[RMDB]
RNA sequence: GGGAACGACUCGAGUAGAGUCGAAAAACAUGCUGGCCAACCCAUCCCCACGAUCCUCCAUCGGCAUGAUCAUGAUGUGUUCUCAAAUAUCAGGCCAGUAAAUCACCAUGCUCGUGCUGGUAAAGGCAACUUAUGCCCAAGUUCGCUUGGGCAUAAACAAAAUAAGUUACUUCGGUAACUUAUUUUGAAAAGAAACAACAACAACAAC
Reactivity to DMS in 0.01 (KOAc 150mM, MgCl2 10mM, bicine 150mM(pH8.5), 24C), signal-to-noise 3, nucleotides 027 to 156: a080c040a090u000g010c010u000g000g010c010c020a140a180c070c030c050a170u000c020c000c010c020a140c130g010a140u000c010c010u000c000c000a060u000c030g040g000c000a020u010g010a040u000c010a030u010g020a040u000g020u000g010u010u000c040u000c050a090a080a120u010a100u010c050a130g000g020c020c020a040g020u000a020a040a100u000c030a030c010c010a030u000g010c100u010c040g050u000g000c010u000g020g010u000a010a050a040g020g010c080a070a100c090u000u000a010u000g000c000c010c010a030a040g000u000u000c300g050c020u000u000g000g000g000c010a000u000a000a030a150
Reactivity to 2A3 in 0.01 (KOAc 150mM, MgCl2 10mM, bicine 150mM(pH8.5), 24C), signal-to-noise 5, nucleotides 027 to 156: a000c040a010u080g000c010u010g000g000c010c010a050a050c070c040c050a100u070c050c020c010c010a040c040g060a110u060c000c030u060c020c020a040u030c020g020g000c000a000u010g010a010u010c010a010u000g040a070u100g040u010g030u100u010c050u010c040a060a110a040u240a110u130c090a050g000g000c000c000a000g000u020a010a060a040u080c000a000c030c000a010u010g010c000u000c010g010u010g000c000u010g010g000u040a140a130a010g040g000c030a040a050c040u020u010a010u010g000c000c000c000a010a010g000u040u080c110g020c130u000u000g020g010g010c000a000u000a000a000a000

Source: RMDB library M2RFOK, as collected in RNAgym. Chemical mapping of a 207-nucleotide RNA with DMS and 2A3. The reactions ran in a buffer of 150 mM KOAc, 10 mM MgCl2 and 150 mM bicine (pH 8.5), at 24 C. High 2A3 reactivity points to a flexible backbone, as in loops and unpaired stretches.